[RMDB]
This 177-nucleotide RNA was probed chemically with DMS and 2A3. For DMS the reverse transcriptase was MarathonRT. High 2A3 reactivity points to a flexible backbone, as in loops and unpaired stretches. 2A3 adducts were read by reverse transcription with SuperScript II with manganese. The reactions ran in a buffer of 150 mM KOAc, 10 mM MgCl2 and 150 mM bicine (pH 8.5), at 24 C.

RNA sequence: GGGAACGACUCGAGUAGAGUCGAAAAGGUCCGCGGCAGGCUCGGUCGGCAAAUCCUCAAAUCGGCCCCAAGUUGCACCGAGCGGGAGCGGCGGUGACGGCCAACGUGUGGUGUCGUGCGGGCGGCACGACCCUGAAGAAUUCGUUCUUCAGGGUCGAAAAGAAACAACAACAACAAC
Reactivity to DMS in 0.01 (KOAc 150mM, MgCl2 10mM, bicine 150mM(pH8.5), 24C), signal-to-noise 9, nucleotides 027 to 126: g010g010u010c020c020g030c040g020g020c050a120g010g010c020u000c030g010g010u000c080g010g000c040a060a070a090u010c040c030u010c120a060a100a110u010c170g010g000c040c010c020c050a080a130g010u000u000g010c090a050c010c010g000a080g010c020g010g010g010a130g010c030g000g010c030g000g010u000g010a080c070g000g000c050c030a070a100c120g010u000g010u000g010g010u000g010u000c040g010u000g020c070g010g000g010c050g010g010c080a120
Reactivity to 2A3 in 0.01 (KOAc 150mM, MgCl2 10mM, bicine 150mM(pH8.5), 24C), signal-to-noise 7, nucleotides 027 to 126: g040g030u040c020c010g010c020g080g020c040a040g070g000c010u010c030g020g030u020c030g030g010c010a040a050a090u090c020c030u120c070a090a120a150u160c070g070g000c010c000c010c030a090a060g060u080u070g040c060a010c010c010g010a010g020c050g000g030g010a150g030c040g030g000c010g000g010u040g030a050c030g030g010c010c010a040a040c060g050u100g030u070g060g050u030g030u060c010g000u020g050c030g010g000g000c000g000g010c030a010